[RMDB]
RNA sequence: GGGAACGACUCGAGUAGAGUCGAAAAAGGUACUGAUUGUCUGGAAAGGCCACUGUUUAGUCUAGCUCUAAAAUCAUGCAUGUUUUGGAACUUAGGAGCACAGGAUGAAACCCCAAUAAAGUGCAUGUGCGUCAAGAAUAUUCGUAUUCUUGACGCAAAAAGAAACAACAACAACAAC
Reactivity to DMS in 0.01 (KOAc 150mM, MgCl2 10mM, bicine 150mM(pH8.5), 24C), signal-to-noise 3, nucleotides 027 to 126: a060g000g010u010a060c060u000g000a110u000u000g020u010c030u000g000g000a130a120a090g010g010c030c060a100c050u000g010u010u000u000a100g020u000c020u000a060g010c040u000c020u000a020a030a040a050u010c040a030u000g010c040a040u000g010u000u000u000u000g000g010a050a030c040u000u000a080g010g010a100g040c120a070c080a010g010g000a090u010g010a060a090a140c120c020c000c060a040a100u000a060a030a070g030u010g000c000a040u000g000
Reactivity to 2A3 in 0.01 (KOAc 150mM, MgCl2 10mM, bicine 150mM(pH8.5), 24C), signal-to-noise 1, nucleotides 027 to 126: a040g080g020u060a020c020u060g100a110u210u040g050u080c040u060g000g010a090a060a060g060g020c050c030a030c060u070g070u080u140u060a060g010u000c040u040a010g020c010u000c000u030a130a000a000a000u100c050a010u040g010c020a040u020g060u000u110u090u070g050g000a050a030c000u010u030a070g040g000a020g010c060a050c030a030g000g000a000u010g000a100a070a050c000c010c000c020a010a010u180a090a100a000g040u050g020c030a030u050g020
This 177-nucleotide RNA was probed chemically with DMS and 2A3. 2A3 adducts were read by reverse transcription with SuperScript II with manganese. Conditions: 150 mM KOAc, 10 mM MgCl2 and 150 mM bicine (pH 8.5), 24 C. The data come from the RNA Mapping Database (RMDB), library OK2TRN. The DMS profile rests on 2,565 reads. For 2A3, 970 sequencing reads were counted.